[RMDB]
Conditions: 150 mM KOAc, 10 mM MgCl2 and 150 mM bicine (pH 8.5), 24 C. This 177-nucleotide RNA was probed chemically with DMS and 2A3.
RNA sequence: GGGAACGACUCGAGUAGAGUCGAAAAAGACCGUUGUAGUUCUAGCAGUAAACGAUGCCGAUACCGUGGUGCGGAUAGGCGACGCGGAAGAAAAAUCGAGUAGGGCCCUGGGGAGAGUACACGCGCAUGGUACAUUGUAGUUCGCUACAAUGUACCAAAAAGAAACAACAACAACAAC
Reactivity to DMS in 0.01 (KOAc 150mM, MgCl2 10mM, bicine 150mM(pH8.5), 24C), signal-to-noise 4, nucleotides 027 to 126: a050g010a150c040c020g020u020u010g010u000a070g020u010u010c060u000a150g020c050a080g000u000a070a070a090c120g030a080u030g000c030c010g000a130u010a050c060c060g020u000g010g020u030g020c070g000g000a130u020a130g000g010c020g000a070c010g030c070g000g030a070a090g010a020a030a030a060a080u010c040g020a040g010u010a110g000g010g030c030c020c020u010g030g000g000g010a040g000a100g020u010a050c100a060c100g010c040g030c130a120
Reactivity to 2A3 in 0.01 (KOAc 150mM, MgCl2 10mM, bicine 150mM(pH8.5), 24C), signal-to-noise 2, nucleotides 027 to 126: a000g100a010c020c000g040u000u070g010u030a090g020u030u060c040u040a020g000c020a010g050u070a070a010a030c070g030a030u100g040c020c010g060a030u040a130c000c000g020u020g060g050u100g040c020g050g030a080u100a050g140g000c000g040a020c020g000c010g010g030a050a000g090a030a180a020a010a050u070c030g000a010g070u050a030g020g000g000c000c000c000u010g030g000g000g000a040g000a010g040u040a010c010a020c030g010c020g000c010a040